[RMDB]
RNA sequence: GGGAACGACUCGAGUAGAGUCGAAAAGCUCCGGUCUUCGGACCGGAGCAAAGAAGCUCAUAAUGACGCAAACAACGGCGUCAGCGUGUGCAAACGCGGAAAAAACUACCUUGUUCGCAAGGUAGAAGUAGCGAUAAAUGUUCGCAUUUAUCGCUACAAAAGAAACAACAACAACAAC
Reactivity to DMS in 0.01 (KOAc 150mM, MgCl2 10mM, bicine 150mM(pH8.5), 24C), signal-to-noise 3, nucleotides 027 to 126: g010c000u000c000c000g000g000u000c000u000u020c250g030g020a000c000c010g000g000a020g020c010a000a000a080g010a260a130g000c020u010c000a060u010a060a210u000g010a010c000g010c000a040a120a120c300a070a120c220g020g010c000g010u000c000a030g000c230g020u000g020u010g000c140a060a090a070c130g000c120g000g000a020a030a040a100a070a120c000u000a000c000c000u000u000g000u000u000c210g000c020a020a000g010g000u000a000g010a040a040
Reactivity to 2A3 in 0.01 (KOAc 150mM, MgCl2 10mM, bicine 150mM(pH8.5), 24C), signal-to-noise 3, nucleotides 027 to 126: g020c000u020c000c000g000g030u010c010u060u100c230g070g010a010c010c000g000g010a000g010c010a000a010a000g000a010a010g020c000u000c040a030u050a110a070u070g000a000c010g000c010a030a190a280c060a110a180c140g070g000c000g000u010c000a000g000c010g010u000g000u030g000c020a090a110a060c070g020c060g130g050a100a050a000a020a020a050c010u000a000c000c010u000u000g040u050u090c250g030c090a000a000g000g020u020a010g000a000a020